[RMDB]
RNA sequence: GGGAACGACUCGAGUAGAGUCGAAAAGCGCUAAGGAAGAAUCGAUUGGUGAAUGGAAAUUAAAGAGAAAAAUUGAUGGAAAGAAAGAAAUCAUAUAUACAUUCCCUCGUGAUUUCAUUCUUAAACAUAAAAUAUCCUACUUCGGUAGGAUAUUUUAAAAAGAAACAACAACAACAAC
Reactivity to DMS in 0.01 (KOAc 150mM, MgCl2 10mM, bicine 150mM(pH8.5), 24C), signal-to-noise 1, nucleotides 027 to 126: g030c110g020c100u010a000a060g030g000a160a130g000a120a030u000c030g020a100u000u000g000g030u020g030a060a020u000g020g010a060a070a090u000u000a020a110a080g020a150g060a080a060a090a110a040u080u000g000a060u000g010g020a160a000a070g000a030a000a100g000a030a030a000u000c000a000u000a100u010a160u010a140c030a130u010u000c000c000c000u000c210g030u000g000a010u000u000u000c000a140u000u000c030u000u000a100a090a090c050a100

Structure probing data (DMS) for a 177-nucleotide construct. It was measured as part of the RMDB library OK2TST.